The record gives the reactivity of an RNA of 177 nucleotides to 2A3 and DMS. The 2A3 profile rests on 890 reads. The DMS profile rests on 4,035 reads.
[RMDB]
RNA sequence: GGGAACGACUCGAGUAGAGUCGAAAACAGUUGAAUCAGGUCAAUACAAUAAAGUGAUGUAUAUCACUGAUGGCGUUUUUAGUAUGGAUGGUGAUGUGGCUAAAUUACCUGAAAUUGUAGAAAUUGCCGGACCAGUGUAAUUCGUUACACUGGUCCGAAAAGAAACAACAACAACAAC
Reactivity to 2A3 in 0.01 (KOAc 150mM, MgCl2 10mM, bicine 150mM(pH8.5), 24C), signal-to-noise 2, nucleotides 027 to 126: c020a000g090u050u000g300a070a040u050c060a040g000g120u030c110a090a120u020a150c000a030a010u060a210a130a070g100u020g060a000u010g180u290a150u080a090u300c090a040c030u080g080a100u020g020g040c030g000u010u000u000u010u020a070g040u010a060u090g050g030a000u000g000g070u010g010a040u000g010u040g090g020c000u050a080a080a080u020u000a010c000c000u050g060a070a000a000u000u060g130u010a060g120a050a050a080u000u070g050c070
Reactivity to DMS in 0.01 (KOAc 150mM, MgCl2 10mM, bicine 150mM(pH8.5), 24C), signal-to-noise 2, nucleotides 027 to 126: c090a120g020u040u010g030a040a140u000c030a070g010g010u000c060a090a060u000a080c170a100a100u010a080a100a030g000u010g000a000u000g020u060a040u040a010u000c000a020c020u010g000a050u000g010g040c040g020u000u000u020u000u000a040g010u010a010u020g000g000a050u020g020g010u000g010a010u010g000u020g010g000c120u020a040a120a020u000u000a000c000c010u000g000a100a030a050u000u000g020u000a050g010a020a100a060u000u000g080c180